Notes: The data come from the RNA Mapping Database (RMDB), library TTRINS. This 177-nucleotide RNA was probed chemically with DMS.
[RMDB]
RNA sequence: GGGAACGACUCGAGUAGAGUCGAAAAGAUAUGGAUACGACUGACUUCCUUCUGGCUUUUGACGCUCGAAGGGUCGGAAACGACCUUAGAGCGAUAAGCCAGAGGAAGUCAGUCGUAUCCUAAGUCAUCUAUGUAUCAGCUUCGGCUGAUACAUAGAAAAAGAAACAACAACAACAAC
Reactivity to DMS in 0.01 (KOAc 150mM, MgCl2 10mM, bicine 150mM(pH8.5), 24C), signal-to-noise 2, nucleotides 027 to 126: g000a080u010a300u000g000g000a010u000a010c000g000a010c020u000g000a010c000u000u010c000c000u000u010c020u010g000g000c000u000u000u000u010g050a290c100g010c000u000c020g000a160a220g010g000g020u000c000g030g000a060a170a240c020g010a010c000c010u020u000a300g000a010g000c000g010a060u000a010a000g010c000c000a000g000a030g000g000a000a000g020u000c000a000g000u000c010g010u000a000u000c000c000u000a020a080g030u010c030a140

For DMS the reverse transcriptase was MarathonRT. Conditions: 150 mM KOAc, 10 mM MgCl2 and 150 mM bicine (pH 8.5), 24 C.